[RMDB]
RNA sequence: GGGAACGACUCGAGUAGAGUCGAAAACCGCACCGUUCGCGGUGCGGCACUCCAUUACACUACCCUGCCUCUUCUCUAUGAGAGGCAGCGGGGUGUAGUGGAUAAAGCACGUCCCUUCGGGGACGUGACGCGCAAAAGAAUUCGUUCUUUUGCGCGUAAAAGAAACAACAACAACAAC
Reactivity to DMS in 0.01 (KOAc 150mM, MgCl2 10mM, bicine 150mM(pH8.5), 24C), signal-to-noise 1, nucleotides 027 to 126: c000c010g000c010a010c010c000g020u000u010c280g020c010g000g020u000g020c000g000g020c080a030c210u000c010c000a010u000u000a000c000a010c000u000a170c000c000c030u000g000c000c000u010c000u010u000c190u000c230u020a130u020g000a010g000a010g000g040c000a010g010c080g000g000g010g000u020g030u000a010g050u000g000g000a030u010a020a100a120g020c010a010c000g000u000c000c000c000u000u010c180g030g000g010g000a000c010g030u000g000
Reactivity to 2A3 in 0.01 (KOAc 150mM, MgCl2 10mM, bicine 150mM(pH8.5), 24C), signal-to-noise 2, nucleotides 027 to 126: c000c000g040c000a020c020c000g050u050u040c250g030c030g140g010u000g020c000g010g000c030a070c030u000c000c000a000u000u000a000c000a010c000u300a300c010c000c000u030g010c000c000u060c010u180u060c100u070c060u180a280u300g010a000g000a000g000g030c000a000g000c010g000g000g000g000u010g010u010a010g010u000g000g000a010u070a030a050a000g050c010a000c000g000u020c000c000c000u000u010c210g010g000g000g000a000c000g000u000g000